[RMDB]
RNA sequence: GGGAACGACUCGAGUAGAGUCGAAAAUUUCUAUCUGCGGAUAGUAAGUGUCACUACUUAGACCUUGUGUCUCCUCAUCUCAACUAAACGAAAUUUUAUCCAUCGCACACAUGUUCGCAUGUGUUUGAUCCCUAUAGCGGUUCGCCGCUAUAGGGAUAAAAGAAACAACAACAACAAC
Reactivity to DMS in 0.01 (KOAc 150mM, MgCl2 10mM, bicine 150mM(pH8.5), 24C), signal-to-noise 2, nucleotides 027 to 126: u010u000u000c010u000a050u000c070u020g050c080g010g010a050u000a020g000u000a030a050g000u000g000u000c130a130c100u010a030c050u020u000a050g000a080c030c020u010u000g020u000g030u010c030u010c040c020u020c030a040u000c070u000c040a050a070c100u020a030a090a080c130g000a050a030a060u000u000u000u010a040u040c000c100a090u000c070g040c140a050c000a010c020a020u000g000u000u040c180g020c010a010u000g000u010g000u000u010u020g000
Reactivity to 2A3 in 0.01 (KOAc 150mM, MgCl2 10mM, bicine 150mM(pH8.5), 24C), signal-to-noise 9, nucleotides 027 to 126: u020u030u000c010u010a060u000c010u030g050c090g100g000a010u020a020g080u110a050a050g040u040g040u120c020a030c130u170a030c020u090u100a040g040a090c010c000u040u120g060u030g040u080c000u020c020c010u050c020a110u030c040u020c040a070a130c060u140a160a060a030c050g100a070a080a070u080u100u070u040a040u080c040c040a040u070c050g030c040a000c010a000c000a010u000g010u020u070c100g020c090a000u010g010u000g020u020u020u100g020
The record gives the reactivity of an RNA of 177 nucleotides to DMS and 2A3. It was measured as part of the RMDB libraries RFM100 and RFMREP. As a SHAPE reagent, 2A3 marks flexible, mostly unpaired nucleotides at the ribose 2'-OH. The RNA was probed in 150 mM KOAc, 10 mM MgCl2 and 150 mM bicine (pH 8.5) at 24 C.